[RMDB]
RNA sequence: GGGAACGACUCGAGUAGAGUCGAAAAUCGCUAUGGCAGAGAGCGUGCAGAAGCUAUCUGAAGGUAAAAAGCUGAGCAGCUUUGAAGAGCGUCAUAUUGAGAUGAUGGCUCAUCUUAAUGAGCGUCAUGAGUCACUGCUCUUCGGAGCAGUGACUCAAAAAGAAACAACAACAACAAC
Reactivity to 2A3 in 0.01 (KOAc 150mM, MgCl2 10mM, bicine 150mM(pH8.5), 24C), signal-to-noise 1, nucleotides 027 to 126: u120c000g000c080u020a000u050g010g230c060a090g010a000g020a000g150c050g040u030g050c000a020g020a140a000g070c000u000a030u170c000u090g200a220a140g040g030u060a090a280a000a000a000g110c020u010g000a030g050c000a040g010c040u000u020u110g140a130a140g060a000g060c000g010u040c080a040u070a040u000u190g190a030g040a090u060g000a000u020g190g050c000u050c020a070u070c000u090u260a090a220u040g000a000g000c000g000u000c000a000
Reactivity to DMS in 0.01 (KOAc 150mM, MgCl2 10mM, bicine 150mM(pH8.5), 24C), signal-to-noise 1, nucleotides 027 to 126: u000c110g000c000u000a030u050g000g130c040a060g000a110g010a050g010c000g000u000g030c070a170g000a240a060g000c000u000a010u000c060u000g020a120a130g060g000u000a120a030a100a180a030g040c000u000g000a120g000c030a130g000c040u040u000u000g050a050a090g000a090g000c080g000u000c020a010u000a120u020u000g000a100g000a010u000g000a080u000g050g000c050u000c000a020u000c170u000u010a060a010u000g040a000g000c030g020u000c010a120